RNA sequence: GGGAACGACUCGAGUAGAGUCGAAAAUCUUCGUAUUCUUUUUCACCUUCCCCUGAUUUGGGAGGCGAUUCGUCGUAAGAGCAAGAAUACGAAGACGAACAAAAAAGCCUCCUGACCAGGAGGCUUUAGGGAAAGCUAAUUUCGAUUAGCUUUCCCUAAAAGAAACAACAACAACAAC
Reactivity to DMS in 0.01 (KOAc 150mM, MgCl2 10mM, bicine 150mM(pH8.5), 24C), signal-to-noise 2, nucleotides 027 to 126: u000c000u000u000c000g000u010a010u010u020c000u000u000u000u030u000c020a160c180c010u000u010c020c010c100c140u060g010a240u060u090u020g000g010g000a030g000g020c020g000a060u000u000c220g020u000c000g060u020a120a070g000a030g000c100a020a020g000a000a000u030a000c000g000a010a000g000a040c080g000a200a080c150a010a050a180a040a000a020g000c000c000u020c000c010u020g000a200c300c250a120g000g000a000g000g000c010u000u000u000
Reactivity to 2A3 in 0.01 (KOAc 150mM, MgCl2 10mM, bicine 150mM(pH8.5), 24C), signal-to-noise 4, nucleotides 027 to 126: u000c000u000u000c000g020u000a000u000u020c000u000u070u010u040u020c010a020c030c010u100u140c020c000c000c020u160g200a260u220u190u160g010g000g010a010g000g030c010g050a040u100u070c140g080u030c040g040u210a150a100g010a000g050c010a010a000g000a000a000u000a000c000g000a000a000g010a000c010g020a030a020c070a040a130a030a010a010a000g000c000c000u010c020c000u100g090a190c040c070a020g000g000a000g000g010c000u000u000u010